Overview: Chemical mapping of a 177-nucleotide RNA with DMS and 2A3. The reactions ran in a buffer of 150 mM KOAc, 10 mM MgCl2 and 150 mM bicine (pH 8.5), at 24 C. The DMS profile rests on 21,994 reads.

RNA sequence: GGGAACGACUCGAGUAGAGUCGAAAAGAGCGUGCAACGCGUUUAAUACGCUACCACAGCGACGACAAGGAACCGUUGCUUCGGAUUGUCGAUCCGGACUCGAAUAUCGAGCUCGGACCGGGACGUAACUAUUCACCUAGUUCGCUAGGUGAAUAGUAAAAGAAACAACAACAACAAC
Reactivity to DMS in 0.01 (KOAc 150mM, MgCl2 10mM, bicine 150mM(pH8.5), 24C), signal-to-noise 9, nucleotides 027 to 126: g010a140g010c030g030u010g000c030a030a110c150g000c110g010u010u010u020a100a110u030a040c030g020c010u000a250c300c060a060c060a100g020c020g000a100c120g010a070c140a100a130g020g000a070a070c080c030g000u000u000g010c050u000u010c060g000g000a140u020u010g010u010c010g010a140u000c010c010g010g010a050c000u000c010g000a180a140u040a130u020c010g000a010g010c020u000c000g010g010a030c060c020g010g000g010a060c080g000u020a070
Reactivity to 2A3 in 0.01 (KOAc 150mM, MgCl2 10mM, bicine 150mM(pH8.5), 24C), signal-to-noise 9, nucleotides 027 to 126: g090a010g030c050g010u040g020c050a050a050c050g030c020g020u030u020u040a220a130u240a050c010g000c010u080a110c020c060a050c050a080g010c010g080a090c020g020a030c070a110a090g100g010a050a050c030c010g030u030u040g030c000u080u100c040g060g040a150u070u120g080u090c000g020a030u000c000c000g010g000a020c000u000c010g020a120a040u200a120u300c010g000a000g010c020u000c000g010g000a010c010c020g030g040g010a020c060g010u040a060